Chemical mapping of a 207-nucleotide RNA with 2A3 and DMS. Values cover nucleotides 27 to 156. For DMS, 1,483 sequencing reads were counted. The RNA was probed in 150 mM KOAc, 10 mM MgCl2 and 150 mM bicine (pH 8.5) at 24 C. It was measured as part of the RMDB library M2RFPK.
RNA sequence: GGGAACGACUCGAGUAGAGUCGAAAAAAAGACGCGGUUGCCGAUCGGUAUGGAUGCCACCGUGACGGCUCAAUCACACAAGUGCCAACGAUAACGAGGCGCUCGCUAUUGCUGCGGAACUGACGGCUAGAUACAGCCAGGUUCGCCUGGCUGUAAAAGUCAUAAUCUCCUUCGGGAGAUUAUGACUAAAAGAAACAACAACAACAAC
Reactivity to 2A3 in 0.01 (KOAc 150mM, MgCl2 10mM, bicine 150mM(pH8.5), 24C), signal-to-noise 1, nucleotides 027 to 156: a000a000a000g140a010c050g000c000g040g040u070u030g030c020c010g030a130u060c020g000g060u080a060u150g050g050a010u120g000c030c030a020c000c010g010u000g060a040c020g000g000c010u000c010a040a090u080c000a010c000a000c010a180a000g020u020g030c010c000a090a010c070g070a110u090a160a030c030g010a060g010g020c010g000c010u020c030g000c060u070a040u100u180g030c030u050g040c000g030g040a030a020c000u040g030a040c020g020g000c010u020a020g000a070u050a010c020a010g000c000c000a010g020g000u010u010c040g020c000c000u000g020g060c020u000g000u000a020a000a000
Reactivity to DMS in 0.01 (KOAc 150mM, MgCl2 10mM, bicine 150mM(pH8.5), 24C), signal-to-noise 1, nucleotides 027 to 156: a110a060a060g010a080c060g030c040g010g000u000u000g050c060c010g030a160u000c000g020g020u000a130u000g020g020a140u010g060c000c030a060c020c080g010u000g000a300c080g000g000c040u010c040a130a220u000c010a100c080a090c070a090a080g040u010g070c060c000a120a090c050g010a110u030a090a140c090g000a180g010g000c170g000c040u000c070g000c030u000a040u000u010g000c030u000g040c080g040g010a080a070c040u030g010a090c100g020g000c040u000a100g030a260u000a020c010a030g000c010c040a000g010g040u000u000c250g030c000c000u010g010g000c000u000g010u000a000a000a060